[RMDB]
RNA sequence: GGGAACGACUCGAGUAGAGUCGAAAAUAAUCAGUAUGAUUUUGAUCAUGUUCAAUCACCUUACCUUUGUCCAUAAAUUUAGAGAAUACUGCAGUACCUAAAAAGGCUAAUAUACCAAUCAUCAUAAAACAGGACGAUGGUUCGCCAUCGUCCUGUUAAAAGAAACAACAACAACAAC
Reactivity to 2A3 in 0.01 (KOAc 150mM, MgCl2 10mM, bicine 150mM(pH8.5), 24C), signal-to-noise 1, nucleotides 027 to 126: u040a080a040u130c000a000g110u120a050u000g090a190u110u030u100u150g120a000u030c050a000u010g000u000u160c000a030a060u190c000a050c050c020u000u050a090c050c000u030u040u000g130u000c000c000a000u030a230a300a200u190u000u000a000g080a000g130a090a000u080a120c000u030g050c000a000g110u040a150c000c000u280a130a190a000a000a000g030g000c000u000a040a040u030a160u070a190c000c000a000a150u050c040a000u060c030a090u110a250a020
Description
An RNA of 177 nucleotides, treated with 2A3 and read out base by base. It was measured as part of the RMDB library OK1LIB.